[RMDB]
RNA sequence: GGGAACGACUCGAGUAGAGUCGAAAAGGAGUUAAGUUCGCUUAACUCCCACUACCGAGAAUGCGACUCGGUAUAUCGCAAUAACCCUUGGAAACAAGGGAUCCACUGACGACUUCGGUCGUCAGAACACGUCGAGGAUGUUCGCAUCCUCGACGUGAAAAGAAACAACAACAACAAC
Reactivity to DMS in 0.01 (KOAc 150mM, MgCl2 10mM, bicine 150mM(pH8.5), 24C), signal-to-noise 1, nucleotides 027 to 126: g040g000a000g000u000u000a000a010g000u000u050c260g020c000u000u000a000a000c000u010c000c020c060a040c260u000a050c000c020g010a040g000a080a010u010g010c160g000a090c010u000c000g050g000u000a020u000a120u000c210g040c200a080a120u020a100a200c000c000c000u000u000g000g000a200a160a180c000a010a000g000g020g020a060u000c000c210a200c000u000g000a000c000g020a010c000u040u000c180g030g000u000c010g010u000c000a000g000a100a190
Reactivity to 2A3 in 0.01 (KOAc 150mM, MgCl2 10mM, bicine 150mM(pH8.5), 24C), signal-to-noise 1, nucleotides 027 to 126: g010g000a010g000u030u020a000a030g020u040u060c060g000c090u010u010a020a000c000u010c020c000c000a070c010u030a030c020c010g000a000g010a110a110u300g060c090g040a030c020u010c010g010g000u010a000u040a010u020c010g030c070a040a040u090a260a270c000c000c020u000u020g020g010a020a070a050c000a010a010g010g010g000a020u010c020c020a130c030u000g000a000c000g000a000c010u030u020c100g090g000u020c000g020u000c000a000g000a010a020